This 177-nucleotide RNA was probed chemically with 2A3 and DMS.
[RMDB]
RNA sequence: GGGAACGACUCGAGUAGAGUCGAAAAGAUAUGGACGCUGAACUACAGCCGCCCAGCAACAGCUCGGAAACGAGACAUGCUGUAACAAGCUGCAGCGUCCUAAGUCAAAGAGGGCUUCGGCCCUCAAGAUUCCCAAUAAGUUCGCUUAUUGGGAAUCAAAAGAAACAACAACAACAAC
Reactivity to 2A3 in 0.01 (KOAc 150mM, MgCl2 10mM, bicine 150mM(pH8.5), 24C), signal-to-noise 2, nucleotides 027 to 126: g020a020u040a030u100g000g000a000c010g000c000u000g030a070a070c110u200a050c300a010g000c010c040g090c060c050c010a000g010c000a010a190c010a120g100c000u010c010g040g000a060a040a030c010g000a000g040a040c010a070u060g000c000u000g020u080a170a130c160a240a070g030c010u030g000c010a010g010c000g000u020c000c000u000a010a020g010u000c000a030a010a120g040a000g010g010g000c040u100u150c270g180g050c000c020c000u000c000a010a000
Reactivity to DMS in 0.01 (KOAc 150mM, MgCl2 10mM, bicine 150mM(pH8.5), 24C), signal-to-noise 5, nucleotides 027 to 126: g010a040u000a300u000g010g000a020c010g020c010u000g000a110a050c150u010a300c030a010g010c010c040g010c300c170c010a010g000c020a020a090c250a140g000c000u000c010g010g000a080a090a170c000g000a020g000a020c090a120u000g010c000u010g000u010a050a070c230a180a080g010c000u000g000c010a010g010c010g010u000c010c000u010a010a080g010u010c050a040a120a130g000a000g010g010g010c000u000u010c180g010g000c000c000c000u010c010a000a040
Conditions: 150 mM KOAc, 10 mM MgCl2 and 150 mM bicine (pH 8.5), 24 C. For 2A3 the reverse transcriptase was SuperScript II with manganese. The 2A3 profile rests on 3,027 reads.